RNA sequence: GGGAACGACUCGAGUAGAGUCGAAAAGAUAUAGUAUUACCUAUUAUGACUGACAAGUUUUACAACGUAAAUGAUUUGUAUGUACUAUAUGAAGUAGCGCCUGAGUAUAAAUUGCCUUUAGCUUAUGAAUGUCUUAAGGAUAAAGAAAAAGGUAUUGCCCUUGUGUAUACUUCGGUAUACACAAGGGAAAAGAAACAACAACAACAAC
Reactivity to 2A3 in 0.01 (KOAc 150mM, MgCl2 10mM, bicine 150mM(pH8.5), 24C), signal-to-noise 3, nucleotides 027 to 156: g000a000u040a000u000a040g000u010a010u000u060a060c010c010u010a040u160u030a080u110g110a040c060u050g060a030c040a120a060g010u030u010u100u190a130c100a190a030c070g160u140a000a120a100u050g020a040u030u060u110g010u020a080u140g040u000a000c010u010a010u010a000u110g020a120a020g050u030a040g040c020g000c080c010u050g080a010g050u030a050u020a150a100a090u130u100g030c000c000u000u020u020a010g000c000u100u050a110u250g100a110a060u150g120u030c000u050u000a040a000g040g030a060u130a060a060a080g070a030a050a070a000a000g120g030u200a100u120u300g020
Reactivity to DMS in 0.01 (KOAc 150mM, MgCl2 10mM, bicine 150mM(pH8.5), 24C), signal-to-noise 1, nucleotides 027 to 156: g010a110u000a030u010a100g000u020a020u020u000a090c020c050u010a070u000u000a050u000g000a200c070u000g010a170c110a230a140g000u000u010u000u000a170c140a080a090c070g000u000a000a100a090u010g010a060u000u000u000g030u020a030u000g050u000a000c030u000a050u010a060u000g020a130a010g020u000a080g020c050g020c010c060u030g020a150g030u000a080u000a050a080a160u000u000g020c000c020u000u000u020a040g050c020u000u000a140u020g000a160a230u020g000u000c050u000u000a050a090g000g020a090u000a060a050a170g000a040a050a060a010a100g020g020u020a050u000u020g040

Overview
This 207-nucleotide RNA was probed chemically with 2A3 and DMS. The 2A3 profile rests on 1,028 reads. For DMS the reverse transcriptase was MarathonRT.